[RMDB]
RNA sequence: GGGAACGACUCGAGUAGAGUCGAAAAGCUUACUUCGGUAAGCAAAAACCUUUGUGUCAAGUAAAUGUAUGGGAGAGAUGUUGGCCCAUUGGGCCAAUACAUCUCGAAGAACAUACAUACUCCUUGACACUCUGGUAAAGGGUCUCUUCGGAGACCCCAGUGUAAGUACGUUCGCGUACUUACACUGAAAAGAAACAACAACAACAAC
Reactivity to 2A3 in 0.01 (KOAc 150mM, MgCl2 10mM, bicine 150mM(pH8.5), 24C), signal-to-noise 3, nucleotides 027 to 156: g000c000u010u000a010c000u030u100c250g120g000u020a000a020g000c020a030a050a030a020a040c010c000u010u000u000g000u000g000u000c010a000a000g010u040a170a080a040u010g000u000a000u000g010g010g000a020g000a000g000a020u010g000u030u020g010g000c020c000c030a060u120u300g010g000g000c000c020a000a000u090a030c010a000u000c000u000c000g010a030a010g000a000a000c000a000u010a000c000a000u010a110c030u030c010c000u000u000g000a000c000a000c000u000c000u000g000g010u080a150a110a060g010g000g000u000c010u000c000u010u100c270g100g000a000g010a000c000c000c000
Reactivity to DMS in 0.01 (KOAc 150mM, MgCl2 10mM, bicine 150mM(pH8.5), 24C), signal-to-noise 2, nucleotides 027 to 156: g010c010u000u000a030c010u010u000c300g030g000u000a020a030g000c010a030a030a070a150a040c000c020u010u000u000g010u000g020u000c000a000a050g000u000a090a300a040u000g000u000a020u000g010g010g040a300g040a030g030a030u000g000u000u010g000g010c000c000c010a300u000u000g070g010g000c000c020a000a020u000a040c020a020u000c000u010c000g010a090a140g020a190a100c000a020u000a010c020a010u000a030c060u000c270c000u000u000g010a020c000a010c020u000c020u000g000g050u000a060a040a060g000g020g000u010c000u000c000u000u010c300g090g000a030g010a000c000c010c010
Structure probing data (2A3 and DMS) for a 207-nucleotide construct. Values cover nucleotides 27 to 156. The 2A3 profile rests on 6,849 reads. The reactions ran in a buffer of 150 mM KOAc, 10 mM MgCl2 and 150 mM bicine (pH 8.5), at 24 C.